[RMDB]
This 207-nucleotide RNA was probed chemically with DMS and 2A3. For 2A3 the reverse transcriptase was SuperScript II with manganese.
RNA sequence: GGGAACGACUCGAGUAGAGUCGAAAAAGCCAUACCAUUACGAUGGUAUGGCAAGUCCGUGACGGCGAUGGAUUCCGCCUGGCCGAUGCCGAACUGCCGAUCUGGCUGAUGGUUCCUGCCCCGUCAAAAAACGUAAAGCACUUCGGUGCUUUACGAACCACUCAUAGUACUUCGGUACUAUGAGUGGAAAAGAAACAACAACAACAAC
Reactivity to DMS in 0.01 (KOAc 150mM, MgCl2 10mM, bicine 150mM(pH8.5), 24C), signal-to-noise 2, nucleotides 027 to 156: a210g010c020c010a010u000a000c010c000a000u010u000a190c250g030a150u020g000g000u010a000u010g010g180c010a000a040g000u010c020c040g010u000g000a030c020g030g020c080g030a160u000g020g000a080u000u010c000c020g040c040c040u000g040g010c050c020g000a100u000g010c060c030g040a060a120c060u010g020c040c030g000a100u000c040u010g060g050c020u000g010a060u010g010g020u000u000c020c040u010g000c070c050c000c000g020u040c010a000a040a080a040a110a120c020g040u000a000a000a020g000c000a010c000u000u000c240g080g020u000g010c010u000u000u000a010c020g000a030a080
Reactivity to 2A3 in 0.01 (KOAc 150mM, MgCl2 10mM, bicine 150mM(pH8.5), 24C), signal-to-noise 4, nucleotides 027 to 156: a000g000c010c000a000u000a010c000c000a010u050u040a060c260g130a010u010g010g000u000a000u000g000g000c000a000a010g030u000c010c020g030u040g010a010c010g000g040c110g040a030u050g000g040a030u260u020c050c030g020c020c060u040g020g010c020c020g040a030u110g130c070c040g120a210a110c080u140g060c040c020g040a060u030c080u190g010g000c020u020g040a070u060g030g010u040u010c000c000u040g030c000c000c000c010g000u000c000a080a040a000a010a000a000c010g000u000a000a000a000g000c000a000c010u020u120c250g080g000u000g000c000u000u000u000a000c000g010a010a000

For DMS, 3,532 sequencing reads were counted. The RNA was probed in 150 mM KOAc, 10 mM MgCl2 and 150 mM bicine (pH 8.5) at 24 C. For 2A3, 5,662 sequencing reads were counted.